[RMDB]
Chemical mapping of a 207-nucleotide RNA with 2A3 and DMS. Values are in units of 0.01, from 0 to 300, in steps of 10. It was measured as part of the RMDB library RNAMAK. Conditions: 150 mM KOAc, 10 mM MgCl2 and 150 mM bicine (pH 8.5), 24 C. For 2A3 the reverse transcriptase was SuperScript II with manganese.

RNA sequence: GGGAACGACUCGAGUAGAGUCGAAAAUGCAUAUUCGUAUGCAACAUGUGCGUACUACACUCGGGAGCAGGAACUACCCACCUAGGUCCCAAAUAGGACCUAGAGGUUUCAUCUGCGCGAAACCGAGUGUAUCGCGGCCAUCAUCAUUCGUGAUGAAUCCACUUUCAGUUUUCGAACUGAAAGUGGAAAAAGAAACAACAACAACAAC
Reactivity to 2A3 in 0.01 (KOAc 150mM, MgCl2 10mM, bicine 150mM(pH8.5), 24C), signal-to-noise 3, nucleotides 027 to 156: u060g000c020a000u010a040u100u080c290g190u010a000u000g000c030a030a010c050a260u220g090u060g080c010g010u050a140c030u000a000c040a000c000u000c020g060g000g000a060g000c000a010g020g000a060a010c070u040a040c080c020c040a110c050c000u000a000g040g000u030c010c020c030a090a300a140u240a040g000g000a000c000c010u000a040g010a010g020g020u010u030u030c070a190u020c010u010g040c060g030c090g110a060a010a010c000c000g000a000g000u010g000u000a000u050c000g000c000g070g000c020c000a030u030c000a000u000c000a000u080u300c250g070u050g070a000u030g010a000a080
Reactivity to DMS in 0.01 (KOAc 150mM, MgCl2 10mM, bicine 150mM(pH8.5), 24C), signal-to-noise 2, nucleotides 027 to 156: u000g010c010a090u000a030u000u000c260g060u000a030u000g020c010a080a160c050a120u010g010u000g010c030g060u000a110c070u000a030c040a010c000u000c020g000g000g000a100g030c000a060g010g020a040a110c060u000a020c020c010c040a300c130c000u020a020g010g020u000c000c000c000a070a130a290u000a050g080g010a040c000c010u000a000g010a100g000g020u010u000u000c020a070u000c020u000g050c030g030c200g080a120a120a170c000c030g000a030g030u010g030u000a000u010c010g020c030g000g080c070c060a080u000c030a070u000c030a070u000u000c110g050u000g000a040u000g010a120a280